[RMDB]
RNA sequence: GGGAACGACUCGAGUAGAGUCGAAAAGGCUGCGUAUCACUCUAGGGUACGUGAUAGUGCGAUAUAAGAAGCACUGAUACAUGCCGGCAGGGACAGUUAAGAGAUGGCCGCAGUCUCGUGUCCCUGCAAAAGGAGUUCUCGUUCGCGAGAACUCCAAGCUAUACCGAUUGUUCGCAAUCGGUAUAGCAAAAGAAACAACAACAACAAC
Reactivity to DMS in 0.01 (KOAc 150mM, MgCl2 10mM, bicine 150mM(pH8.5), 24C), signal-to-noise 1, nucleotides 027 to 156: g000g010c030u060g060c040g010u000a040u000c040a110c060u000c120u000a240g040g040g000u000a010c000g020u010g010a060u000a030g000u000g000c010g000a210u020a150u000a140a190g010a200a290g000c010a000c010u000g010a300u010a030c030a120u000g040c000c000g030g000c000a010g000g040g000a040c020a090g000u000u010a080a150g010a060g000a030u000g000g080c130c170g030c020a250g020u000c010u000c010g050u000g000u000c000c000c000u010g000c010a040a010a060a030g010g010a010g030u000u000c000u000c000g040u000u010c260g000c010g000a000g000a010a040c000u000c000c000a000a110
Reactivity to 2A3 in 0.01 (KOAc 150mM, MgCl2 10mM, bicine 150mM(pH8.5), 24C), signal-to-noise 4, nucleotides 027 to 156: g000g010c010u010g010c020g000u020a020u060c020a070c250u130c200u240a090g030g120g000u020a010c020g000u000g030a030u090a050g000u010g000c000g010a030u030a020u090a300a120g130a130a000g000c000a000c010u000g010a000u050a120c080a030u140g000c000c010g000g010c000a000g000g000g010a010c000a050g030u140u140a200a030g020a000g000a020u040g130g040c090c050g030c130a030g030u000c000u000c000g010u030g000u010c000c000c000u000g000c000a010a010a000a010g000g000a000g000u000u000c010u000c010g030u030u070c220g000c000g080a000g000a000a010c000u000c000c000a000a010